[RMDB]
Chemical mapping of a 177-nucleotide RNA with 2A3 and DMS. The RNA was probed in 150 mM KOAc, 10 mM MgCl2 and 150 mM bicine (pH 8.5) at 24 C. High 2A3 reactivity points to a flexible backbone, as in loops and unpaired stretches.

RNA sequence: GGGAACGACUCGAGUAGAGUCGAAAAUGGAAAGGCUAAGAACCUCGCAACGAGGUAAGGUGGGACUUUUCCUUCUGGAACCAAGCGGUUGGUUCCGAGGGGGGUGUGAUCCAGGUACCGCCGUAGACAAAGCUAAAAGGUUCGCCUUUUAGCUUUGAAAAGAAACAACAACAACAAC
Reactivity to 2A3 in 0.01 (KOAc 150mM, MgCl2 10mM, bicine 150mM(pH8.5), 24C), signal-to-noise 2, nucleotides 027 to 126: u110g000g030a070a060a030g070g020c060u110a070a050g040a060a050c000c010u010c010g070c100a160a150c140g010a000g000g000u030a010a050g000g010u030g010g010g010a020c000u030u030u050u120c020c000u000u010c070u130g000g000a000a010c000c010a000a030g150c070g260g170u040u030g000g000u000u000c000c000g010a030g010g010g010g000g000g010u050g080u080g060a030u120c010c030a020g070g000u020a010c000c000g000c000c000g000u030a000g010a030
Reactivity to DMS in 0.01 (KOAc 150mM, MgCl2 10mM, bicine 150mM(pH8.5), 24C), signal-to-noise 4, nucleotides 027 to 126: u000g010g010a050a060a050g000g020c040u010a080a110g000a100a060c000c000u000c020g000c200a110a120c150g010a030g010g010u010a030a050g010g020u000g000g010g000a050c020u000u000u010u010c000c000u010u000c020u010g040g010a010a010c000c000a020a050g020c220g010g010u000u000g000g000u000u000c010c000g010a030g010g000g000g000g000g010u010g020u010g010a090u000c040c020a110g000g010u000a040c030c010g010c030c030g010u010a050g010a200